[RMDB]
RNA sequence: GGGAACGACUCGAGUAGAGUCGAAAAGAUAUGGAUUCCUGACUCGCGAUAAGAAGUCAUCGGAAACGAUGAUACUUCUUUUGACGCGAGAGGGAAUCCUAAGUCAAAAGAUCACUUCGGUGAUCAAGUAAUGCUUGCAGUUCGCUGCAAGCAUUACAAAAGAAACAACAACAACAAC
Reactivity to DMS in 0.01 (KOAc 150mM, MgCl2 10mM, bicine 150mM(pH8.5), 24C), signal-to-noise 2, nucleotides 027 to 126: g040a070u010a300u020g020g010a010u000u000c000c000u000g000a290c040u000c010g000c000g000a190u000a000a000g020a020a020g000u000c000a000u000c000g020g000a180a140a190c000g030a000u010g000a100u010a020c010u010u020c000u030u000u000u000g010a270c120g000c020g000a000g000a300g000g000g000a020a000u020c000c000u000a000a040g000u000c020a160a040a220a040g000a000u000c010a000c000u000u010c200g020g030u000g000a020u000c000a040a100
Reactivity to 2A3 in 0.01 (KOAc 150mM, MgCl2 10mM, bicine 150mM(pH8.5), 24C), signal-to-noise 2, nucleotides 027 to 126: g010a010u060a040u110g010g000a020u020u060c010c000u150g290a300c030u020c020g020c000g010a040u020a130a000g000a010a020g000u040c000a000u000c010g020g020a100a060a020c000g000a000u010g030a010u050a070c020u000u000c000u020u040u000u060g100a080c080g010c010g000a000g000a010g030g000g000a000a000u010c000c000u020a080a000g030u020c020a020a020a060a080g000a000u000c000a000c020u090u160c300g180g000u010g000a020u010c000a010a010